[RMDB]
RNA sequence: GGGAACGACUCGAGUAGAGUCGAAAACGCCGUUUGAGGAUCGAAACACUAAAUUGAAUCAAACUAGCUUAUUUCUUGCGUGUCUGUCCGCUGGAGGUAAGUGAAAUUAAAGACCAGACUAAACGUGUAGUGCUGAAGAUGGAGUAAUUUCGGACGGGCAUACUGUAAGGUUCGCCUUACAGUAUGCAAAAGAAACAACAACAACAAC
Reactivity to DMS in 0.01 (KOAc 150mM, MgCl2 10mM, bicine 150mM(pH8.5), 24C), signal-to-noise 2, nucleotides 027 to 156: c050g060c070c070g030u000u010u030g010a130g030g010a140u000c070g000a170a130a060c080a170c060u000a010a100a140u000u010g020a180a130u010c000a040a040a070c050u000a300g010c020u000u000a010u000u000u000c010u000u000g010c000g040u010g040u010c050u000g010u010c080c010g000c030u000g000g010a100g000g030u000a040a040g000u000g000a040a050a140u000u000a040a110a140g020a070c060c070a140g010a060c060u000a080a050a030c090g000u010g010u010a030g020u010g000c040u000g000a050a110g010a060u000g010g000a150g010u000a090a140u000u000u000c020g010g010a160c140g020g020
Reactivity to 2A3 in 0.01 (KOAc 150mM, MgCl2 10mM, bicine 150mM(pH8.5), 24C), signal-to-noise 6, nucleotides 027 to 156: c080g050c030c040g000u000u010u040g030a020g040g030a060u080c070g080a070a120a030c120a060c140u230a150a170a180u150u110g060a030a030u030c030a020a020a030c020u010a030g000c000u000u010a010u020u060u000c010u010u060g010c000g000u050g030u020c030u040g040u010c010c010g000c010u030g010g000a000g000g010u010a020a000g010u010g020a030a000a000u150u150a070a030a010g040a040c040c070a010g010a020c020u090a070a080a040c060g040u050g050u110a060g020u050g060c040u040g020a070a040g050a090u040g040g000a030g040u100a080a080u030u090u110c070g030g030a040c030g040g070